The record gives the reactivity of an RNA of 177 nucleotides to DMS and 2A3. Values cover nucleotides 27 to 126. As a SHAPE reagent, 2A3 marks flexible, mostly unpaired nucleotides at the ribose 2'-OH. It was measured as part of the RMDB library OK2TRN. The 2A3 profile rests on 3,680 reads. The reactions ran in a buffer of 150 mM KOAc, 10 mM MgCl2 and 150 mM bicine (pH 8.5), at 24 C.
[RMDB]
RNA sequence: GGGAACGACUCGAGUAGAGUCGAAAAGGGCGAACUAUACAGUGUCUUGCCUACCUCUGAUCUCAUGGUGGAGAAACUCUAUUUAUCUUCACAUAGAGGGAUUAUCAAAGAUGACGAGGCCAAUUGGCCUCGGACCUCCUUUCGAGGAGGUCCGAGGAAAAGAAACAACAACAACAAC
Reactivity to DMS in 0.01 (KOAc 150mM, MgCl2 10mM, bicine 150mM(pH8.5), 24C), signal-to-noise 5, nucleotides 027 to 126: g030g010g010c010g010a040a060c030u000a130u020a160c250a090g020u010g020u000c050u000u010g020c000c010u010a110c050c010u000c070u000g010a080u010c020u000c050a080u000g010g020u000g010g010a030g010a050a130a120c270u010c160u010a070u020u010u010a150u040c030u000u000c020a030c050a030u000a060g000a060g020g010g010a090u000u000a060u000c100a040a100a060g000a060u000g000a110c130g000a020g010g020c010c010a110a260u000u010g030g010
Reactivity to 2A3 in 0.01 (KOAc 150mM, MgCl2 10mM, bicine 150mM(pH8.5), 24C), signal-to-noise 5, nucleotides 027 to 126: g050g010g010c010g020a040a030c050u060a050u160a300c100a120g050u020g070u140c060u050u100g010c010c000u000a030c010c010u000c030u040g050a060u010c010u010c060a070u150g050g000u030g040g030a020g000a070a050a010c090u090c040u130a140u080u220u060a180u040c050u070u030c020a010c020a070u090a040g100a090g060g010g030a050u070u050a070u120c060a130a060a010g090a100u100g010a030c090g020a020g000g000c020c000a030a160u130u240g100g000